Conditions: 150 mM KOAc, 10 mM MgCl2 and 150 mM bicine (pH 8.5), 24 C. This 177-nucleotide RNA was probed chemically with 2A3 and DMS. For DMS, 41,803 sequencing reads were counted.
[RMDB]
RNA sequence: GGGAACGACUCGAGUAGAGUCGAAAAUAAUCUGACUGGCUAUGAGGUCAGACCACAUGCGCAUCUCAUAUCAUGUCAGUCAUGGGGUGCAGAGACCUGGGUUAAUUCACAAACUCAGAAUUGAGAAGAUAGUAGACGAUUUCGAUUGUUUGCUAUCAAAAGAAACAACAACAACAAC
Reactivity to 2A3 in 0.01 (KOAc 150mM, MgCl2 10mM, bicine 150mM(pH8.5), 24C), signal-to-noise 9, nucleotides 027 to 126: u130a010a050u030c020u010g010a010c000u010g040g100c110u130a070u210g110a040g030g010u010c010a010g010a030c010c020a100c010a080u160g050c050g000c050a020u000c010u000c010a020u040a050u110c100a090u160g140u150c040a030g030u020c020a020u040g000g000g000g010u020g000c020a010g020a010g010a070c000c010u010g000g000g000u020u040a070a060u220u120c060a030c020a080a030a010c000u000c000a010g060a050a110u110u110g040a010g010a080a000
Reactivity to DMS in 0.01 (KOAc 150mM, MgCl2 10mM, bicine 150mM(pH8.5), 24C), signal-to-noise 9, nucleotides 027 to 126: u030a090a140u020c010u000g000a030c010u000g010g010c130u040a060u020g010a120g000g000u010c030a050g010a070c090c070a030c170a080u040g010c130g010c060a020u000c010u010c020a020u010a080u020c120a100u040g010u020c120a080g000u010c080a030u010g000g000g020g010u000g010c040a100g010a110g010a080c140c000u000g000g000g010u000u000a040a080u010u010c080a050c110a030a050a030c010u000c000a010g010a090a120u030u020g000a060g010a150a120